[RMDB]
RNA sequence: GGGAACGACUCGAGUAGAGUCGAAAAGAUUGGCUCUAAGGGUCGGGUAGUGAGGGCCUUGGUCACGGCCUUGGCUUGCUACAAUUAACGAUCAACUUAGAACUGGUACGGACAAGGGGAAUCUGACUGUUAACGAGAUUCCCACUGUCCCUAUCUAUCUUAAUGCUCUGUUCGCAGAGCAUUAAGAAAAAGAAACAACAACAACAAC
Reactivity to DMS in 0.01 (KOAc 150mM, MgCl2 10mM, bicine 150mM(pH8.5), 24C), signal-to-noise 4, nucleotides 027 to 156: g010a150u000u000g010g010c000u000c000u000a020a040g010g010g010u000c020g010g000g020u000a020g030u020g000a100g030g000g030c000c000u000u000g010g020u000c040a130c290g060g010c010c000u000u000g010g030c000u010u010g000c010u000a030c010a140a150u000u010a130a100c010g010a030u000c010a070a110c020u000u000a020g010a040a040c020u000g020g030u000a070c160g010g000a060c020a070a060g000g020g000g020a060a030u000c010u000g010a240c100u010g030u000u030a140a120c120g010a060g000a050u000u000c000c000c000a010c010u000g000u000c000c000c010u000a040u000c020u000a240
Reactivity to 2A3 in 0.01 (KOAc 150mM, MgCl2 10mM, bicine 150mM(pH8.5), 24C), signal-to-noise 6, nucleotides 027 to 156: g130a090u120u160g020g020c030u000c000u020a010a000g010g000g000u010c020g020g030g000u010a010g000u010g190a120g030g070g060c000c010u000u010g010g000u070c070a080c230g130g000c010c000u000u000g000g000c000u010u130g010c000u010a000c020a060a220u210u150a130a030c020g000a010u010c030a040a220c030u010u030a000g010a020a040c050u060g020g000u010a020c030g000g010a000c000a040a070g000g000g010g010a000a000u010c000u010g120a130c070u160g170u300u270a190a070c080g010a010g000a010u000u000c000c000c000a010c000u000g000u000c010c000c000u020a030u000c010u010a040